An RNA of 177 nucleotides, treated with 2A3 and DMS and read out base by base. For 2A3 the reverse transcriptase was SuperScript II with manganese. Reactivities are given for positions 27 through 126. For DMS, 30,737 sequencing reads were counted. The RNA was probed in 150 mM KOAc, 10 mM MgCl2 and 150 mM bicine (pH 8.5) at 24 C. Source: RMDB library OK2TST, as collected in RNAgym.
RNA sequence: GGGAACGACUCGAGUAGAGUCGAAAAUCAGCGUGGCCAGCCAUCGCUGACAGUCUAAAAAAGGGAGCAGAUGCGGUGGUUAUUCCCUAUCCCUCCCGAUGGAACAAUCUCAUACCUACCGUCAUCACAGAUAUACUUAGUUCGCUAAGUAUAUCUGAAAAGAAACAACAACAACAAC
Reactivity to 2A3 in 0.01 (KOAc 150mM, MgCl2 10mM, bicine 150mM(pH8.5), 24C), signal-to-noise 9, nucleotides 027 to 126: u030c000a000g010c010g020u020g010g020c050c040a050g140c060c010a090u160c090g000c000u000g000a000c020a020g100u010c090u210a060a040a030a040a030a050g040g010g000a050g050c070a060g020a040u020g010c010g000g010u010g010g000u050u050a050u090u030c000c000c000u010a060u070c010c000c000u010c000c000c010g020a070u070g030g020a060a050c040a080a130u050c060u030c100a070u110a100c010c010u020a030c010c010g120u150c030a020u020c010a010
Reactivity to DMS in 0.01 (KOAc 150mM, MgCl2 10mM, bicine 150mM(pH8.5), 24C), signal-to-noise 9, nucleotides 027 to 126: u000c020a020g020c030g050u000g000g010c100c180a220g020c010c010a030u010c040g020c000u000g010a060c160a100g010u010c100u010a000a040a050a110a090a070g010g000g010a040g020c250a080g000a040u000g010c040g000g020u000g000g010u000u000a090u000u000c010c000c020u000a090u000c020c030c040u000c010c000c010g010a090u000g000g000a060a100c140a070a080u000c080u000c080a070u010a050c050c010u000a050c020c010g000u010c030a030u000c040a300